[RMDB]
An RNA of 177 nucleotides, treated with DMS and 2A3 and read out base by base. 2A3 adducts were read by reverse transcription with SuperScript II with manganese. For 2A3, 2,306 sequencing reads were counted. The data come from the RNA Mapping Database (RMDB), library OK1LIB. Values cover nucleotides 27 to 126. For DMS the reverse transcriptase was MarathonRT.
RNA sequence: GGGAACGACUCGAGUAGAGUCGAAAAACAGCCCCGGCUCGAGCUGGGCUUCGUCGAUGACGAGCGUGUCCACCGGCCGGGAUACGAAUGCGCGGGGAUCGUCGCGGGCGGCGUCGCGGUUGGCGACAUCGAGCAGUUCAUUCGUGAACUGCUCGAUAAAAGAAACAACAACAACAAC
Reactivity to DMS in 0.01 (KOAc 150mM, MgCl2 10mM, bicine 150mM(pH8.5), 24C), signal-to-noise 1, nucleotides 027 to 126: a100c140a130g000c050c010c000c010g000g000c020u000c060g010a140g020c160u000g020g000g000c000u010u000c020g000u000c000g010a180u050g070a020c020g000a020g000c170g040u000g020u000c000c000a010c070c060g000g000c000c020g040g000g000a030u040a010c000g040a080a080u030g000c000g020c040g030g000g030g040a230u000c110g000u010c140g000c020g000g000g020c090g000g020c080g020u000c070g020c050g010g000u020u030g000g000c080g030a080c120
Reactivity to 2A3 in 0.01 (KOAc 150mM, MgCl2 10mM, bicine 150mM(pH8.5), 24C), signal-to-noise 4, nucleotides 027 to 126: a000c040a050g060c000c020c000c000g020g000c100u140c200g140a150g050c180u030g000g000g000c000u090u030c000g010u010c090g240a150u300g010a020c000g000a020g040c120g100u100g020u010c020c020a010c000c030g000g000c000c000g010g000g010a030u080a030c030g070a090a080u190g040c060g010c020g050g020g000g000a080u060c050g070u050c050g000c020g050g020g020c010g000g000c010g000u000c000g000c030g030g100u090u070g040g030c010g000a000c020